[RMDB]
RNA sequence: GGGAACGACUCGAGUAGAGUCGAAAAUCUUACCUUUGAAUUUUUAAAUGCAGCCUGACUAAGGGUUGUGGUAGCAUUCUUAGCUCUGAUUCCCUCAAGGUAGCAUUUCCAUGGCCCCUGGGCACUACCAUUAAGGCUUGUUCGCAAGCCUUAAUGGAAAAGAAACAACAACAACAAC
Reactivity to DMS in 0.01 (KOAc 150mM, MgCl2 10mM, bicine 150mM(pH8.5), 24C), signal-to-noise 3, nucleotides 027 to 126: u010c060u000u010a070c060c040u010u010u000g000a060a030u010u000u010u000u010a040a090a100u010g010c010a300g000c060c010u000g010a150c220u020a120a130g000g010g020u000u000g020u020g000g030u000a050g010c110a080u000u000c050u000u020a080g020c040u000c040u000g010a170u000u000c010c000c000u000c160a020a040g010g030u000a060g010c110a060u000u000u000c060c040a090u010g020g000c030c000c010c070u020g040g010g000c120a080c140u000a110
Reactivity to 2A3 in 0.01 (KOAc 150mM, MgCl2 10mM, bicine 150mM(pH8.5), 24C), signal-to-noise 2, nucleotides 027 to 126: u010c000u070u100a110c000c000u060u070u130g070a090a110u050u080u070u200u300a130a110a040u110g020c000a000g060c000c000u040g060a160c060u160a050a090g050g000g020u040u030g030u060g080g050u100a020g000c020a060u190u040c010u120u150a020g000c020u000c020u050g080a150u050u020c010c000c030u050c000a060a000g000g030u030a010g040c010a030u010u050u040c080c030a110u100g120g010c000c040c000c040u040g000g010g030c030a010c050u030a050
This 177-nucleotide RNA was probed chemically with DMS and 2A3. DMS adducts were read by reverse transcription with MarathonRT. Values cover nucleotides 27 to 126. The data come from the RNA Mapping Database (RMDB), library OK2TST.